[RMDB]
Chemical mapping of a 177-nucleotide RNA with DMS and 2A3.
DMS (dimethyl sulfate) methylates the pairing face of unpaired adenines and cytosines.
Source: RMDB libraries RFM100 and RFMREP, as collected in RNAgym.
The reactions ran in a buffer of 150 mM KOAc, 10 mM MgCl2 and 150 mM bicine (pH 8.5), at 24 C.
RNA sequence: GGGAACGACUCGAGUAGAGUCGAAAAACGGUGGCCGGUACGCCGGCCACCGACGGGGUGAUGAUGCCGAGAUAGGAAGUGCCGUCAGAUGCGAGAACUGACGAGACGCUCAUCUCCGUCUGACCAAACCUCUAUAGCUAUUCGUAGCUAUAGAGGUAAAAGAAACAACAACAACAAC
Reactivity to DMS in 0.01 (KOAc 150mM, MgCl2 10mM, bicine 150mM(pH8.5), 24C), signal-to-noise 3, nucleotides 027 to 126: a110c110g020g060u000g020g080c020c000g060g030u020a090c290g040c010c020g050g020c010c030a000c030c000g000a010c060g000g010g000g010u010g000a080u010g000a060u000g030c130c110g000a080g020a070u000a080g030g010a130a100g010u010g000c070c030g010u020c010a020g010a110u000g010c160g000a130g000a090a200c040u000g000a020c020g010a120g010a140c090g010c030u000c010a030u000c000u000c010c020g000u010c010u000g010a120c030c090a090a150
Reactivity to 2A3 in 0.01 (KOAc 150mM, MgCl2 10mM, bicine 150mM(pH8.5), 24C), signal-to-noise 6, nucleotides 027 to 126: a010c070g020g000u010g010g040c040c020g000g020u080a070c300g120c040c000g000g000c010c000a000c000c000g000a000c000g000g010g010g040u080g020a070u040g000a030u110g120c100c060g030a040g040a120u230a110g130g100a130a050g050u040g100c020c010g010u000c000a000g020a070u150g150c140g100a060g060a190a110c030u010g010a010c010g020a060g010a050c040g010c030u020c010a040u020c010u000c010c000g010u000c020u020g030a030c000c000a060a040